[RMDB]
RNA sequence: GGGAACGACUCGAGUAGAGUCGAAAAGCGGAAAUGAGUGCGUGGUAGCACAAACCAGACCAAUCCGCGGCACAAGGUCGCACAUGCACAGCUUCGCCUGUGCAAAGCGAACAAGGCGAACAAAGAACGAUACGUCACGUUUCGACGUGACGUAUCGAAAAGAAACAACAACAACAAC
Reactivity to DMS in 0.01 (KOAc 150mM, MgCl2 10mM, bicine 150mM(pH8.5), 24C), signal-to-noise 2, nucleotides 027 to 126: g050c000g000g020a010a050a090u080g010a160g000u000g020c140g040u000g030g040u020a090g000c080a110c100a070a170a050c080c040a120g020a110c100c010a030a120u040c000c000g000c000g050g080c090a260c020a050a300g000g000u000c020g020c040a130c080a200u010g000c000a000c010a000g020c030u060u060c110g000c300c000u010g010u020g090c020a000a020a110g020c010g080a030a010c020a150a100g000g000c030g000a010a100c280a070a130a190g010a040a010
Reactivity to 2A3 in 0.01 (KOAc 150mM, MgCl2 10mM, bicine 150mM(pH8.5), 24C), signal-to-noise 3, nucleotides 027 to 126: g030c030g000g030a020a110a080u060g010a110g020u130g140c170g070u070g030g070u050a020g070c090a000c110a130a040a010c000c010a000g050a000c000c000a000a040u000c000c010g000c000g020g000c060a030c050a210a040g070g010u000c000g000c020a040c000a130u050g000c000a000c000a000g000c000u230u240c040g090c020c000u000g000u000g000c000a000a000a000g000c000g000a030a030c000a020a040g100g000c050g000a030a040c070a090a120a040g140a060a020